RNA sequence: GGGAACGACUCGAGUAGAGUCGAAAAGGGGCGCUGUUUGUAGGAAGCAUGCUACAGAGUACAGAGAGUAUAUGGAAGCAUAUAAUCUUGUCUCUGCAUCAGGUUUCCGCCUUUGGUGUUAUAAGACGGGGAGCAGGGUUCGCCCUGCUCAAAAGAAACAACAACAACAAC
Reactivity to DMS in 0.01 (KOAc 150mM, MgCl2 10mM, bicine 150mM(pH8.5), 24C), signal-to-noise 2, nucleotides 027 to 129: g030g000g000g000c090g040c080u000g020u050u010u030g010u030a140g000g000a020a040g040c030a060u030g000c100u010a130c040a000g020a000g020u080a040c030a070g030a050g010a030g040u010a050u020a010u000g020g010a170a140g000c020a020u000a020u000a020a040u020c050u020u030g030u010c040u010c020u000g010c100a020u010c020a000g010g060u000u000u000c010c030g030c120c030u020u040u030g020g030u080g020u040u040a020u000a130a140g030a110c070g000g080g000
Reactivity to 2A3 in 0.01 (KOAc 150mM, MgCl2 10mM, bicine 150mM(pH8.5), 24C), signal-to-noise 4, nucleotides 027 to 129: g000g000g000g000c030g010c020u030g110u130u170u110g070u100a070g000g000a000a020g040c010a030u020g010c000u010a020c000a010g000a000g000u140a040c030a010g230a010g010a010g140u010a010u000a010u000g030g050a080a080g160c020a000u050a000u000a000a030u020c000u010u040g000u000c000u000c000u000g010c000a020u000c010a000g000g000u000u000u000c000c010g000c000c000u060u050u080g080g010u070g020u090u110a180u010a190a000g080a040c050g030g000g000
Structure probing data (DMS and 2A3) for a 170-nucleotide construct.